[RMDB]
RNA sequence: GGGAACGACUCGAGUAGAGUCGAAAAUAAAUCAUAGAUCGAACCGCCGAAUCGGAAAAAUUGGGUGCUAUCAUAAAGCUUUGUAUCGGCUAAGUUCACGAGUUGGAGAUAAGCGGACUCGAACCGCAGAUACUGAGCGGUUCGCCGCUCAGUAUCUAAAAGAAACAACAACAACAAC
Reactivity to 2A3 in 0.01 (KOAc 150mM, MgCl2 10mM, bicine 150mM(pH8.5), 24C), signal-to-noise 5, nucleotides 027 to 126: u080a000a040a020u100c050a050u080a080g070a050u090c030g000a010a030c000c010g020c040c030g070a010a050u110c080g120g160a010a100a030a020a040u160u160g120g030g040u090g020c030u050a040u120c020a100u160a190a220a000g000c010u020u100u160g070u070a090u020c010g020g000c020u030a110a040g040u030u040c050a030c110g040a060g030u040u110g080g030a090g010a110u110a150a040g020c000g000g060a080c050u030c110g050a080a030c020c010g000c010
Reactivity to DMS in 0.01 (KOAc 150mM, MgCl2 10mM, bicine 150mM(pH8.5), 24C), signal-to-noise 5, nucleotides 027 to 126: u030a090a040a080u010c070a080u030a060g010a060u020c060g000a080a130c080c070g020c050c030g020a030a110u030c030g010g000a030a060a030a070a070u020u000g010g000g030u010g000c050u000a050u010c110a080u020a050a100a070g000c030u010u000u010g010u010a110u000c040g000g010c020u000a050a070g020u000u010c030a070c060g000a020g020u020u000g000g000a130g010a090u010a060a070g000c000g000g010a080c080u040c160g020a050a070c010c000g010c030
This 177-nucleotide RNA was probed chemically with 2A3 and DMS. For DMS, 9,775 sequencing reads were counted. Source: RMDB library OK1LIB, as collected in RNAgym. The RNA was probed in 150 mM KOAc, 10 mM MgCl2 and 150 mM bicine (pH 8.5) at 24 C.